[RMDB]
Structure probing data (2A3 and DMS) for a 207-nucleotide construct. For DMS, 3,008 sequencing reads were counted. The reactions ran in a buffer of 150 mM KOAc, 10 mM MgCl2 and 150 mM bicine (pH 8.5), at 24 C. Values cover nucleotides 27 to 156.

RNA sequence: GGGAACGACUCGAGUAGAGUCGAAAAGAGCCACAUACCUACCCAAGGUGAAAGCUCCUUCUCUCGCAAUGUGUAACUCAUGAUUCUCAUGAGCCCUGGUUGGAGAGAUCCGGACUAGGAGCCAGGGAAAGCCGCUGCCGAUUCGUCGGCAGCGGAAGAAGAGAAUGAUGUUCGCAUCAUUCUCUUCAAAAGAAACAACAACAACAAC
Reactivity to 2A3 in 0.01 (KOAc 150mM, MgCl2 10mM, bicine 150mM(pH8.5), 24C), signal-to-noise 3, nucleotides 027 to 156: g010a000g040c040c050a050c040a100u230a070c040c000u040a080c030c010c040a090a040g020g010u040g040a090a090a020g010c020u030c000c020u060u020c010u000c010u030c030g100c180a130a190u110g080u030g030u160a150a070c000u010c000a020u040g060a190u300u070c100u030c080a020u020g020a020g000c010c010c000u000g020g000u040u070g040g020a060g010a010g000a080u020c050c030g040g040a050c050u060a060g000g090a010g020c000c000a000g000g010g020a070a050a010g020c000c000g000c000u000g000c010c010g030a020u050u080c150g030u020c000g120g010c000a000g000c010g000g000a000a000
Reactivity to DMS in 0.01 (KOAc 150mM, MgCl2 10mM, bicine 150mM(pH8.5), 24C), signal-to-noise 2, nucleotides 027 to 156: g000a090g020c050c030a050c120a140u010a020c010c020u000a110c110c060c090a230a120g000g000u010g010a110a170a110g000c030u000c010c020u010u010c010u010c000u010c040g030c050a180a040u000g010u000g040u000a100a060c020u020c010a050u020g000a200u000u010c110u000c010a080u000g000a050g020c020c020c040u000g030g020u000u010g000g000a070g000a130g020a080u000c020c040g010g010a180c050u030a080g030g010a140g000c000c020a090g010g020g000a070a080a100g000c000c000g010c000u000g000c000c010g010a080u000u000c240g000u000c010g020g000c000a000g010c000g000g000a010a030

About this RNA: 2A3 adducts were read by reverse transcription with SuperScript II with manganese. In probing experiments dimethyl sulfate is read out at A N1 and C N3, which are open when not base-paired. The data come from the RNA Mapping Database (RMDB), library M2RFPK.